[RMDB]
RNA sequence: GGGAACGACUCGAGUAGAGUCGAAAACUACAUAGUUUCGACUAUGUAGAAACCAUUAGGAAGCAUGCAGAUGCAUAUGGACGAGGCCAACUAACCUAUUGCGAACAGCAGGUUUCGACCUGCUGAAACAUGAGGUAGUCUUCGGACUACCUCAUGUAAAAGAAACAACAACAACAAC
Reactivity to 2A3 in 0.01 (KOAc 150mM, MgCl2 10mM, bicine 150mM(pH8.5), 24C), signal-to-noise 2, nucleotides 027 to 126: c000u010a000c000a000u000a000g010u020u060u080c170g060a030c000u000a010u010g000u000a000g000a000a000a000c020c000a020u040u100a060g100g110a120a030g040c060a030u120g000c070a050g050a270u090g010c030a070u060a080u180g040g030a040c040g030a040g010g000c000c000a020a020c040u070a030a040c020c030u080a120u060u230g080c090g050a090a030c030a000g000c020a010g000g000u030u000u130c130g030a010c000c000u000g000c010u000g000a010a010
Reactivity to DMS in 0.01 (KOAc 150mM, MgCl2 10mM, bicine 150mM(pH8.5), 24C), signal-to-noise 3, nucleotides 027 to 126: c010u000a000c000a010u000a000g000u000u000u010c200g020a030c000u000a000u000g010u000a010g000a050a080a160c040c000a130u000u010a090g010g000a100a100g000c050a030u000g010c090a070g010a080u020g010c050a060u000a070u000g020g010a070c100g000a060g010g010c050c030a050a070c100u010a060a100c000c040u010a080u000u000g000c070g030a090a210c000a020g020c000a010g000g000u000u000u010c150g000a020c010c000u000g010c000u000g000a040a070
Source information: Structure probing data (2A3 and DMS) for a 177-nucleotide construct. For 2A3 the reverse transcriptase was SuperScript II with manganese. It was measured as part of the RMDB library M2PK50. High 2A3 reactivity points to a flexible backbone, as in loops and unpaired stretches.